[RMDB]
RNA sequence: GGGAACGACUCGAGUAGAGUCGAAAACUUCUUUCAGUCCUGGUGGUGUGCUUCUGUGCCUGCUUGAAAAUUUCACUCGGAAAUAAAGUCAAAUGUCUAAUUUGCAGCCCCUCCUGAAUGUGAGACCCAAUCUGGAGGACCCUAUAGACUCAUACCACUAAUAUUAGUGAUUCGUCACUAAUAUUAGAAAAGAAACAACAACAACAAC
Reactivity to DMS in 0.01 (KOAc 150mM, MgCl2 10mM, bicine 150mM(pH8.5), 24C), signal-to-noise 2, nucleotides 027 to 156: c060u000u000c020u010u000u000c010a130g000u010c020c020u000g000g070u010g020g030u000g030u010g030c020u000u010c030u010g020u000g020c010c020u010g030c040u000u010g010a080a060a060a130u000u010u000c010a110c060u020c080g010g000a070a100a130u000a060a080a130g010u000c080a040a050a100u000g020u000c060u010a060a090u000u010u010g020c030a070g040c010c040c030c000u030c020c020u000g010a060a070u000g030u010g010a160g010a110c050c030c020a090a120u000c050u010g000g010a090g040g010a070c040c030c040u000a120u000a080g010a070c010u000c020a070u000a120c040c010a210
Reactivity to 2A3 in 0.01 (KOAc 150mM, MgCl2 10mM, bicine 150mM(pH8.5), 24C), signal-to-noise 3, nucleotides 027 to 156: c010u040u050c000u030u150u090c050a040g020u010c020c020u060g020g020u020g000g000u030g020u020g040c010u050u070c020u040g060u040g040c020c010u020g030c030u080u050g040a070a100a090a110u100u090u040c070a050c090u090c040g070g070a050a110a110u170a070a140a020g060u070c060a070a040a070u050g010u000c020u050a110a160u050u070u150g030c030a020g060c020c030c000c000u000c010c000u020g060a080a040u060g020u020g030a060g020a030c020c020c000a010a050u020c020u020g000g000a010g020g010a020c010c000c010u080a080u020a090g020a020c010u010c070a020u070a120c030c030a010